[RMDB]
RNA sequence: GGGAACGACUCGAGUAGAGUCGAAAAGAACAGAGGCAGUCUUAGCGACGGACGUCACUUCCUUCUUGUUACUUAAAUUGCUGGGGGGCUCCCAACACCUGGACUUUUGGCACCACGAGGUCAACACCAGGAGAUAUUGGUUCGCCAAUAUCUCCUGAAAAGAAACAACAACAACAAC
Reactivity to DMS in 0.01 (KOAc 150mM, MgCl2 10mM, bicine 150mM(pH8.5), 24C), signal-to-noise 1, nucleotides 027 to 126: g000a050a070c100a040g000a070g030g020c070a070g030u000c080u010u000a110g010c050g000a100c060g010g000a050c050g010u000c070a090c080u000u000c000c010u000u000c050u020u000g030u000u000a110c080u010u000a030a130a080u000u010g000c040u000g000g000g000g000g000g000c070u010c070c020c030a130a110c080a050c080c090u000g000g010a090c100u000u000u020u000g010g020c100a030c020c030a060c120g000a040g000g000u010c040a040a040c120a060c090